[RMDB]
RNA sequence: GGGAACGACUCGAGUAGAGUCGAAAAGAUAUGGAUCUGAAGUCUUCGAAGAACUACUUCCAUCGGAAACGAUGGAGAGUAGGGAGAAGUCACAGAUCCUAAGUCAAAAUCGUGCCUUCGGGCACGAGAAUAUCACAGACUUCGGUCUGUGAUAUUCAAAAGAAACAACAACAACAAC
Reactivity to DMS in 0.01 (KOAc 150mM, MgCl2 10mM, bicine 150mM(pH8.5), 24C), signal-to-noise 5, nucleotides 027 to 126: g010a060u020a300u000g010g010a000u000c010u000g010a200a200g020u010c000u000u010c020g000a110a200g020a220a210c000u010a000c000u000u000c000c010a000u000c000g000g000a160a090a160c000g020a010u000g010g010a010g010a020g020u000a000g000g000g010a110g010a010a030g020u010c020a210c000a020g010a010u000c000c000u000a010a060g020u000c040a130a070a060a280u000c010g020u000g000c000c000u000u000c300g060g010g010c010a000c000g000a010
Reactivity to 2A3 in 0.01 (KOAc 150mM, MgCl2 10mM, bicine 150mM(pH8.5), 24C), signal-to-noise 6, nucleotides 027 to 126: g030a000u090a050u160g000g010a000u000c000u020g080a300a050g080u010c020u010u020c070g300a300a150g030a190a080c010u010a000c010u010u000c010c010a010u010c000g030g030a080a050a050c000g000a000u000g010g030a010g020a000g000u000a000g000g010g010a210g000a010a010g020u020c020a000c000a080g000a000u000c000c000u020a100a020g050u000c040a030a010a010a300u070c010g000u010g000c010c010u040u080c300g100g000g000c010a000c000g000a000

Overview:
Source: RMDB library TTRDES, as collected in RNAgym. Chemical mapping of a 177-nucleotide RNA with DMS and 2A3. For DMS the reverse transcriptase was MarathonRT. Values cover nucleotides 27 to 126. The reactions ran in a buffer of 150 mM KOAc, 10 mM MgCl2 and 150 mM bicine (pH 8.5), at 24 C.